The record gives the reactivity of an RNA of 207 nucleotides to 2A3 and DMS.
Conditions: 150 mM KOAc, 10 mM MgCl2 and 150 mM bicine (pH 8.5), 24 C.
For 2A3 the reverse transcriptase was SuperScript II with manganese.
High DMS reactivity at an A or C suggests that its Watson-Crick edge is free.
[RMDB]
RNA sequence: GGGAACGACUCGAGUAGAGUCGAAAAGGGACGCCUUUAGAAGAAGAGGCUAGGUGGAAUUCCGGUGUGGGAUACUUGGUAAUAUGUAACGCUAAUUGCAUAAGAUUGUAGGACGGAAUUUACAGUCAAAACGGUCCUGCGUUCGCGCAGGACCGAAGUAAGAACUCUAGUUCGCUAGAGUUCUUACAAAAGAAACAACAACAACAAC
Reactivity to 2A3 in 0.01 (KOAc 150mM, MgCl2 10mM, bicine 150mM(pH8.5), 24C), signal-to-noise 3, nucleotides 027 to 156: g030g000g020a030c060g020c000c020u040u030u080a190g040a260a000g030a060a010g010a040g030g020c070u040a030g040g010u040g010g100a060a090u080u060c040c030g040g050u160g010u080g040g000g000a030u030a120c030u080u100g030g020u060a080a060u040a090u100g040u030a040a000c040g020c180u110a130a060u100u040g000c010a010u010a120a080g030a070u070u090g020u020a010g000g080a020c050g010g030a010a010u050u040u030a070c020a020g010u050c030a010a040a080a070c010g000g010u000c000c000u030g010c000g010u010u030c170g010c000g030c050a000g000g050a000c000c000g000a010a000
Reactivity to DMS in 0.01 (KOAc 150mM, MgCl2 10mM, bicine 150mM(pH8.5), 24C), signal-to-noise 1, nucleotides 027 to 156: g000g000g000a150c130g000c020c000u000u010u000a090g000a100a220g000a210a090g000a090g010g020c000u000a000g000g000u000g030g000a120a140u010u000c000c010g030g030u000g010u000g000g000g020a100u010a050c140u000u000g030g020u000a120a130u030a010u000g010u010a090a110c090g030c130u030a070a080u000u000g050c010a110u010a090a120g000a040u030u000g010u000a010g030g030a120c010g020g030a070a160u000u000u000a010c000a080g050u010c000a060a040a110a180c020g030g030u000c020c010u030g020c000g010u000u000c300g000c000g020c000a010g000g020a000c000c010g000a000a030